[RMDB]
An RNA of 177 nucleotides, treated with DMS and 2A3 and read out base by base.
The reactions ran in a buffer of 150 mM KOAc, 10 mM MgCl2 and 150 mM bicine (pH 8.5), at 24 C.
DMS adducts were read by reverse transcription with MarathonRT.

RNA sequence: GGGAACGACUCGAGUAGAGUCGAAAAGGAUGCAACGUACUAAUAUGUGUGACAGCUACCUCUUGAGUUACGCAUUAGUAUUCAUGAUGUCAUUCAAGAGGUAGAUGACGUCAUGAAAUCUGCAUCGCUACAUGUGUGUAUUCGUACAUACAUGUAGAAAAGAAACAACAACAACAAC
Reactivity to DMS in 0.01 (KOAc 150mM, MgCl2 10mM, bicine 150mM(pH8.5), 24C), signal-to-noise 9, nucleotides 027 to 126: g000g000a010u000g010c010a040a090c260g010u000a100c130u000a070a080u010a060u000g010u010g020u000g010a040c030a120g000c010u000a010c010c000u000c000u000u000g000a040g010u000u000a060c300g010c010a010u000u000a050g010u000a110u010u010c200a050u000g000a030u000g010u000c090a030u000u000c010a010a010g000a010g000g010u000a010g000a010u000g010a100c180g010u000c000a010u000g000a040a090a080u000c100u000g010c000a010u000c000g000
Reactivity to 2A3 in 0.01 (KOAc 150mM, MgCl2 10mM, bicine 150mM(pH8.5), 24C), signal-to-noise 9, nucleotides 027 to 126: g030g000a000u000g000c000a030a040c050g080u060a020c040u070a030a190u070a080u180g130u010g000u010g030a020c010a010g010c000u010a010c000c000u010c000u010u010g010a010g000u010u020a010c010g000c000a010u020u030a030g080u110a090u060u100c020a010u020g060a070u050g010u000c000a000u010u010c010a010a000g010a010g020g000u010a000g000a000u010g020a010c040g010u010c000a000u020g030a030a030a020u050c030u020g000c000a000u000c000g000